[RMDB]
Source: RMDB library OK1LIB, as collected in RNAgym. An RNA of 177 nucleotides, treated with DMS and 2A3 and read out base by base. The RNA was probed in 150 mM KOAc, 10 mM MgCl2 and 150 mM bicine (pH 8.5) at 24 C. The 2A3 profile rests on 543 reads.
RNA sequence: GGGAACGACUCGAGUAGAGUCGAAAACUCAUGUGCCAAUGAGAACAGCAGUAACCGCUCGAGGGGGUUGAGGGUCUGAUGCGAGAGGUGGUCGUACAGCAAGGAAUGGUUCGCGUGUGUGGUGUGCCGUCUAACGCCAUUUCGAUGGCGUUAGACGAAAAGAAACAACAACAACAAC
Reactivity to DMS in 0.01 (KOAc 150mM, MgCl2 10mM, bicine 150mM(pH8.5), 24C), signal-to-noise 2, nucleotides 027 to 126: c040u010c000a030u000g010u010g050c020c110a130a030u040g000a060g060a100a130c110a070g070c070a060g010u010a090a090c090c020g020c030u000c090g000a130g000g000g000g000g000u030u000g010a020g040g010g000u050c050u030g020a060u040g000c090g000a090g020a070g000g000u020g000g030u000c040g000u030a090c090a070g030c060a040a070g010g010a050a110u000g010g000u000u000c020g020c070g000u000g020u000g000u000g000g000u020g020u020g020c100
Reactivity to 2A3 in 0.01 (KOAc 150mM, MgCl2 10mM, bicine 150mM(pH8.5), 24C), signal-to-noise 1, nucleotides 027 to 126: c020u030c020a030u020g020u000g030c040c040a100a010u000g010a000g010a160a040c000a020g130c000a000g020u060a070a070c010c060g030c000u050c010g020a030g110g040g000g000g000u040u100g040a150g000g000g000u030c020u010g170a100u130g120c010g000a030g010a000g190g050u040g040g070u030c010g000u050a000c040a010g000c000a030a080g060g080a100a160u090g050g000u040u080c070g000c030g000u100g020u020g000u000g010g100u000g030u040g070c000